[RMDB]
RNA sequence: GGGAACGACUCGAGUAGAGUCGAAAAGCCUGCGGCUUAAUUUGACUCAACACGGGGAAACUUACCAGGUCAGGACAUGGGAAGGAUUGACAGAUUGAGAGUUCUUUCUUGAUUCCUUGGGUGGUGGCUUAAUCAUAAGCUUCGGCUUAUGAUUAAGAAAAGAAACAACAACAACAAC
Reactivity to DMS in 0.01 (KOAc 150mM, MgCl2 10mM, bicine 150mM(pH8.5), 24C), signal-to-noise 4, nucleotides 027 to 126: g020c000c020u000g020c290g030g020c010u000u000a050a100u000u000u010g010a040c010u000c010a090a040c050a110c040g000g000g010g010a090a070a090c060u000u010a070c020c020a060g000g020u010c040a060g010g010a050c070a050u000g010g010g020a030a020g000g000a050u010u000g010a160c150a090g010a150u000u010g010a090g000a120g020u000u000c020u000u000u000c020u000u000g000a180u000u000c010c000u000u000g010g010g010u000g010g020u000g010g000
Reactivity to 2A3 in 0.01 (KOAc 150mM, MgCl2 10mM, bicine 150mM(pH8.5), 24C), signal-to-noise 3, nucleotides 027 to 126: g010c010c060u180g290c250g040g000c020u020u040a090a040u130u040u060g010a000c000u000c010a040a010c020a010c040g030g000g000g040a000a070a010c030u080u050a050c000c010a010g070g260u030c030a010g020g000a000c010a040u100g020g000g010a010a000g010g000a000u010u090g090a060c050a060g260a190u190u270g060a140g010a030g120u060u030c000u010u020u020c000u010u070g090a160u050u080c010c020u070u080g040g020g000u030g000g050u030g020g030
Structure probing data (DMS and 2A3) for a 177-nucleotide construct. 2A3 is a SHAPE reagent: it acylates the 2'-hydroxyl of flexible nucleotides of all four kinds. Values cover nucleotides 27 to 126. The 2A3 profile rests on 2,801 reads. For 2A3 the reverse transcriptase was SuperScript II with manganese. The DMS profile rests on 4,119 reads. The RNA was probed in 150 mM KOAc, 10 mM MgCl2 and 150 mM bicine (pH 8.5) at 24 C. It was measured as part of the RMDB library RFMREP.